[RMDB]
RNA sequence: GGGAACGACUCGAGUAGAGUCGAAAAAUACAUACUGACACCGGUUGCUCAACAGGCUGUGUGGGACAAUAGAAUAACAAGGCUGUCAAUUUGAGCUUGACGGCUGGAAACCGAAUGGAGUGAAAUCGUAACCGGACUCACUUCGGUGAGUCCGGAACUACUACCAUGGUUUCGACCAUGGUAGUAGAAAAGAAACAACAACAACAAC
Reactivity to DMS in 0.01 (KOAc 150mM, MgCl2 10mM, bicine 150mM(pH8.5), 24C), signal-to-noise 1, nucleotides 027 to 156: a030u000a050c040a160u000a210c070u020g030a130c040a040c050c030g020g000u000u000g010c020u000c090a050a130c040a060g000g000c020u030g020u000g040u020g010g020g080a110c050a080a060u000a120g000a190a090u000a050a070c040a110a260g000g000c030u000g020u010c000a010a060u000u000u010g020a110g040c300u010u030g030a080c030g030g060c000u000g020g000a130a080a080c020c000g020a150a150u010g000g000a050g020u000g010a070a040a050u020c060g000u030a130a100c010c050g020g000a010c000u000c010a010c030u000u020c300g040g000u000g020a060g040u000c000c010g020g000a000a050
Reactivity to 2A3 in 0.01 (KOAc 150mM, MgCl2 10mM, bicine 150mM(pH8.5), 24C), signal-to-noise 2, nucleotides 027 to 156: a010u130a030c040a000u140a090c030u060g100a000c030a030c060c020g060g030u060u120g020c030u050c070a060a040c000a120g020g070c040u060g020u040g020u030g060g050g020a030c080a010a070u090a140g090a120a100u130a050a040c040a080a000g070g000c020u000g020u030c000a000a030u160u040u240g010a060g000c010u010u000g000a000c010g000g010c020u020g020g010a040a030a000c030c030g000a050a020u110g040g000a020g050u140g080a100a050a020u240c130g020u070a040a030c000c020g000g000a000c000u000c010a010c030u050u000c170g040g010u010g000a000g060u010c000c000g000g000a000a000
Conditions: 150 mM KOAc, 10 mM MgCl2 and 150 mM bicine (pH 8.5), 24 C. Structure probing data (DMS and 2A3) for a 207-nucleotide construct. For DMS the reverse transcriptase was MarathonRT. For 2A3, 669 sequencing reads were counted.